[RMDB]
Chemical mapping of a 177-nucleotide RNA with DMS. For DMS, 861 sequencing reads were counted. High DMS reactivity at an A or C suggests that its Watson-Crick edge is free.
RNA sequence: GGGAACGACUCGAGUAGAGUCGAAAAAUCUUGGCGAUGUCAGCGCGGAAGGAGCGCGCAACUCCUUACCCUCGCCUUUUUUUUUCCGCUCCCGUUCGCGAAAGCGUUCAGCGGAAAAGGGACCAAAGCUGCUAAACUGAUUCGUCAGUUUAGCAGCAAAAGAAACAACAACAACAAC
Reactivity to DMS in 0.01 (KOAc 150mM, MgCl2 10mM, bicine 150mM(pH8.5), 24C), signal-to-noise 2, nucleotides 027 to 126: a030u010c080u010u000g010g020c010g030a040u000g000u000c200a120g010c160g040c220g040g000a070a010g000g010a010g020c050g000c300g000c160a130a110c010u000c000c000u000u000a180c020c000c020u000c050g000c010c000u060u000u000u000u040u000u000u010u000c010c010g030c030u010c140c050c070g000u010u000c000g040c030g000a110a090a170g030c000g030u000u000c030a080g010c000g000g010a010a020a020a010g000g020g020a140c070c100a040a110a130